An RNA of 177 nucleotides, treated with DMS and 2A3 and read out base by base. The reactions ran in a buffer of 150 mM KOAc, 10 mM MgCl2 and 150 mM bicine (pH 8.5), at 24 C. The DMS profile rests on 894 reads. For 2A3, 830 sequencing reads were counted.
[RMDB]
RNA sequence: GGGAACGACUCGAGUAGAGUCGAAAAUCAUUAUAAUCAGUGUCGAUUAUAAUGUUCAACAUUGAUUAGCAGCCCAGGAUGAGACUCCUUCUUCUAGUUUGCCAAUUUUUUAGGAACAAAUCACUCACGUACCUCACAAGUUCGCUUGUGAGGUACGAAAAGAAACAACAACAACAAC
Reactivity to DMS in 0.01 (KOAc 150mM, MgCl2 10mM, bicine 150mM(pH8.5), 24C), signal-to-noise 1, nucleotides 027 to 126: u010c000a050u000u010a020u000a030a000u000c010a120g010u010g010u020c130g030a000u010u000a040u020a040a010u040g000u000u000c090a050a150c110a080u000u000g000a040u000u010a050g030c050a110g020c060c050c020a070g000g000a110u000g010a080g000a120c050u020c040c010u000u000c040u000u000c050u010a060g010u000u000u020g010c040c010a070a020u000u000u000u000u060u000a090g010g000a160a080c110a020a030a060u030c110a010c050u000c070a150
Reactivity to 2A3 in 0.01 (KOAc 150mM, MgCl2 10mM, bicine 150mM(pH8.5), 24C), signal-to-noise 1, nucleotides 027 to 126: u040c000a000u030u110a010u060a000a030u000c000a000g070u010g140u290c050g020a020u020u040a040u070a050a050u080g010u040u050c060a100a000c050a080u110u150g010a040u110u020a080g000c040a040g010c030c000c040a000g000g050a030u050g010a030g070a070c020u050c020c000u000u000c010u040u010c020u040a050g000u020u010u100g000c010c040a070a060u070u020u000u030u110u300a090g090g000a070a010c020a000a010a000u130c040a020c030u030c000a060